RNA sequence: GGGAACGACUCGAGUAGAGUCGAAAAGUACCAAUAUCAGCGAUCAACUUGAUCGCUUCCAACGCCAUUGCGGAACCAAUGGUGCCAACAAGAGGUCCCAAAACUCCUGCUUCCGCACAAUUAGGGACAUCUCCUGGAAGUGGUGGUUGAGGAAACAGAUCCUAUACGUAUUCGUACGUAUAGGAUCAAAAGAAACAACAACAACAAC
Reactivity to DMS in 0.01 (KOAc 150mM, MgCl2 10mM, bicine 150mM(pH8.5), 24C), signal-to-noise 3, nucleotides 027 to 156: g020u010a190c040c020a120a150u000a090u000c090a060g000c000g000a040u000c010a150a150c100u010u010g010a030u000c010g030c010u010u000c030c040a070a070c010g010c000c000a030u010u000g020c020g010g040a180a170c250c000a040a030u010g010g020u000g000c010c030a070a130c090a060a050g030a040g010g000u000c020c010c040a020a080a130a080c030u000c070c030u000g000c020u000u000c050c050g000c060a060c090a060a100u010u000a140g010g020g030a070c050a110u000c040u000c020c030u000g020g010a120a140g010u000g010g040u000g020g020u010u010g000a080g010g000a070a080a070c030a180
Reactivity to 2A3 in 0.01 (KOAc 150mM, MgCl2 10mM, bicine 150mM(pH8.5), 24C), signal-to-noise 9, nucleotides 027 to 156: g060u050a060c020c010a050a040u140a100u190c080a030g020c010g020a010u000c020a050a290c150u170u280g020a000u010c000g000c000u010u020c020c010a080a030c020g000c000c000a010u000u040g040c130g130g070a060a060c030c000a010a020u020g010g010u020g060c050c040a090a110c040a150a070g050a040g080g040u020c020c000c000a040a090a030a060c050u050c020c010u020g030c020u080u040c030c040g060c040a040c060a120a220u180u150a100g010g000g050a040c030a160u090c080u030c030c020u040g010g020a030a010g010u010g030g010u020g010g010u020u020g020a040g040g000a070a040a010c040a030
The record gives the reactivity of an RNA of 207 nucleotides to DMS and 2A3. It was measured as part of the RMDB library OK3TST. DMS adducts were read by reverse transcription with MarathonRT. Conditions: 150 mM KOAc, 10 mM MgCl2 and 150 mM bicine (pH 8.5), 24 C. DMS (dimethyl sulfate) methylates the pairing face of unpaired adenines and cytosines.